[RMDB]
RNA sequence: GGGAACGACUCGAGUAGAGUCGAAAAUGAAAAGAUAGUAGCAUUCAUGGCUUUGCUCACCAUGGUGAUUGACACAGAAAGAAGCGAUGCUAUUUUCAAGAUACUCAGUAAGCUUAAGACCGUGUUCCGACCCUUUCGUAUUCGUACGAAAGGGUCGAAAAGAAACAACAACAACAAC
Reactivity to 2A3 in 0.01 (KOAc 150mM, MgCl2 10mM, bicine 150mM(pH8.5), 24C), signal-to-noise 4, nucleotides 027 to 126: u070g000a020a060a000a070g040a040u080a050g050u050a010g000c020a020u000u080c130a080u180g070g000c030u050u050u020g030c030u010c000a000c010c000a090u140g090g000u000g030a130u100u220g040a080c040a010c080a140g120a080a220a010g050a060a010g000c010g040a000u060g030c000u000a020u020u000u000u010c000a020a040g030a040u110a110c010u010c070a030g130u110a150a000g020c000u110u060a030a000g070a040c030c020g050u010g080u140u080c020
Reactivity to DMS in 0.01 (KOAc 150mM, MgCl2 10mM, bicine 150mM(pH8.5), 24C), signal-to-noise 2, nucleotides 027 to 126: u000g010a080a110a080a110g000a000u010a010g040u000a020g000c000a050u020u020c040a060u040g000g000c050u000u020u010g020c070u010c170a100c000c030a060u030g000g100u000g000a080u000u030g000a170c000a120c050a210g010a010a050a110g010a070a010g000c000g000a050u000g040c030u000a010u000u000u000u030c000a160a150g000a000u010a050c050u000c080a190g000u000a150a020g010c000u000u020a070a130g010a060c080c110g020u010g030u000u000c040